[RMDB]
Source: RMDB library 15KLIB, as collected in RNAgym. Chemical mapping of a 170-nucleotide RNA with 2A3 and DMS. For 2A3 the reverse transcriptase was SuperScript II with manganese.
RNA sequence: GGGAACGACUCGAGUAGAGUCGAAAAGGGGUCCGACGUCCCACCCUUUCUUACCUUUUGGCCGGCAUGGUCCCAGCCUCCUCGCUGGCGCCGGCUGGGCAACAUUCCGAGGGGACCGUCCCUCGGUUUAUACCUGAGUUCGCUCAGGUAAAAAGAAACAACAACAACAAC
Reactivity to 2A3 in 0.01 (KOAc 150mM, MgCl2 10mM, bicine 150mM(pH8.5), 24C), signal-to-noise 9, nucleotides 027 to 129: g030g010g000g020u090c060c040g060a070c040g090u050c010c000c010a040c010c010c010u010u050u010c060u060u090a160c020c010u080u060u090u150g100g030c000c000g010g010c040a100u170g030g020u140c030c010c020a010g020c000c030u120c020c030u080c080g000c010u030g010g000c020g010c000c000g010g000c010u020g000g010g000c020a080a030c010a150u080u030c010c000g010a010g020g010g010g040a100c030c020g250u270c000c000c000u000c000g000g000u000u030u010a020
Reactivity to DMS in 0.01 (KOAc 150mM, MgCl2 10mM, bicine 150mM(pH8.5), 24C), signal-to-noise 9, nucleotides 027 to 129: g000g000g000g000u000c060c070g010a080c140g040u010c000c000c000a090c000c000c000u030u000u030c080u010u010a110c090c040u000u020u010u020g000g060c000c050g000g010c030a100u010g000g050u050c300c020c010a000g000c030c070u030c110c070u020c180g000c010u030g000g000c200g000c020c020g020g000c000u000g000g010g000c060a060a060c280a100u060u030c030c010g010a000g010g000g010g010a180c180c200g000u060c020c010c020u020c000g010g000u030u020u020a070

For 2A3, 34,298 sequencing reads were counted.